[RMDB]
RNA sequence: GGGAACGACUCGAGUAGAGUCGAAAAGAUAUGGACUCGUUGUCAGCUGGGGAGCCAACUAUGAAGUCGGAAACGAUGGAGUUGGUGAAAGACAGCUUGGAUUUACGAGUCCUAAGUCAAAUGGAAUACAAACCGAUUCGUCGGUUUGUAUUCCAAACAUGAUAAGAGGCUUCGGCCUCUUAUCAUGAAAAGAAACAACAACAACAAC
Reactivity to DMS in 0.01 (KOAc 150mM, MgCl2 10mM, bicine 150mM(pH8.5), 24C), signal-to-noise 2, nucleotides 027 to 156: g000a070u000a220u000g010g010a000c010u010c000g010u000u000g000u000c020a070g020c030u000g010g000g000g010a300g000c020c010a010a020c010u000a140u010g010a170a280g010u010c010g010g000a190a100a240c030g000a050u000g000g020a070g000u000u000g000g020u000g010a110a030a080g000a110c020a040g000c010u000u000g030g010a080u000u000u000a050c030g020a020g010u020c010c000u000a010a100g020u020c040a070a140a190u000g010g030a040a000u000a000c000a010a020a040c020c000g000a110u000u000c300g020u000c020g040g020u000u000u000g020u000a010u000u000c000c000a000a020a040
Reactivity to 2A3 in 0.01 (KOAc 150mM, MgCl2 10mM, bicine 150mM(pH8.5), 24C), signal-to-noise 3, nucleotides 027 to 156: g030a000u090a050u160g000g000a000c010u000c000g010u010u020g030u030c000a000g000c000u000g050g000g020g000a060g020c000c010a000a000c010u050a140u300g060a010a000g000u010c010g010g070a050a060a040c000g000a000u020g020g010a020g000u000u010g020g020u050g050a040a050a020g200a010c000a000g030c010u030u100g060g010a030u120u120u200a000c000g010a000g000u010c000c000u000a030a020g020u000c010a020a080a140u080g000g000a000a000u010a000c000a000a000a000c000c000g010a010u060u090c250g050u020c000g090g000u000u000u000g000u000a000u000u000c000c000a000a010a000